[RMDB]
RNA sequence: GGGAACGACUCGAGUAGAGUCGAAAACGUAGAUACUUCGGUAUCUACGAAAAUAACGCUGGCGUGGGAGACAGCCGGAGCUAGCCUCGGAUAGUCUCAGUAAAACAGCAUGGUUCGCCAUGCUGAAGAUUCCGUAGGGGUUCGCCCCUACGGAAUCAAAAGAAACAACAACAACAAC
Reactivity to DMS in 0.01 (KOAc 150mM, MgCl2 10mM, bicine 150mM(pH8.5), 24C), signal-to-noise 1, nucleotides 027 to 126: c000g030u010a020g000a010u000a010c020u000u000c240g060g000u000a000u000c000u010a000c000g010a010a080a040a040u010a100a220c110g060c080u020g030g050c030g010u020g050g060g010a040g020a030c010a070g000c010c000g030g000a010g000c020u010a110g000c150c000u010c030g050g000a090u000a070g000u000c000u000c020a120g010u010a030a050a180a190c000a010g010c030a000u000g000g000u000u010c230g010c020c000a010u000g000c010u000g000a040a080
Reactivity to 2A3 in 0.01 (KOAc 150mM, MgCl2 10mM, bicine 150mM(pH8.5), 24C), signal-to-noise 1, nucleotides 027 to 126: c010g010u010a000g010a000u010a000c000u020u040c300g110g000u000a000u020c000u000a000c000g000a000a000a000a000u070a040a010c060g050c170u090g040g000c010g070u130g140g300g000a010g000a010c000a000g000c000c010g010g020a020g010c050u120a020g060c000c000u000c020g040g000a030u030a150g000u000c000u000c040a000g040u080a000a100a050a070c010a000g000c010a000u010g000g100u020u050c120g000c010c000a010u010g010c010u000g000a010a040
Chemical mapping of a 177-nucleotide RNA with DMS and 2A3. For DMS the reverse transcriptase was MarathonRT. The reactions ran in a buffer of 150 mM KOAc, 10 mM MgCl2 and 150 mM bicine (pH 8.5), at 24 C. It was measured as part of the RMDB library M2PK50. For DMS, 706 sequencing reads were counted. The 2A3 profile rests on 1,087 reads.